[RMDB]
Chemical mapping of a 177-nucleotide RNA with DMS. The RNA was probed in 150 mM KOAc, 10 mM MgCl2 and 150 mM bicine (pH 8.5) at 24 C. The data come from the RNA Mapping Database (RMDB), library RFM100.

RNA sequence: GGGAACGACUCGAGUAGAGUCGAAAAAUCUGGUAACAGAUGCCUCUGGGGCCAAAAGCCAAGGUUUGACAGACCCAUUAGGAUUGGUUUCAAAACCUGAAUUGUUGUGGAAGAUAUUCAGUACCUACUGCGGACAUAUAUUCGUAUAUGUCCGCAGAAAAGAAACAACAACAACAAC
Reactivity to DMS in 0.01 (KOAc 150mM, MgCl2 10mM, bicine 150mM(pH8.5), 24C), signal-to-noise 2, nucleotides 027 to 126: a010u010c000u000g000g000u080a130a080c020a010g050a030u000g010c010c000u000c130u020g000g000g000g040c000c000a060a130a140a180g000c000c020a160a030g030g010u000u000u000g030a120c300a050g000a070c040c010c040a040u070u010a020g060g000a230u000u010g000g000u000u030u000c020a040a000a060a120c110c000u000g000a040a080u020u010g000u000u020g000u000g000g020a080a020g000a050u020a050u000u000c100a040g040u020a060c050c060u020a070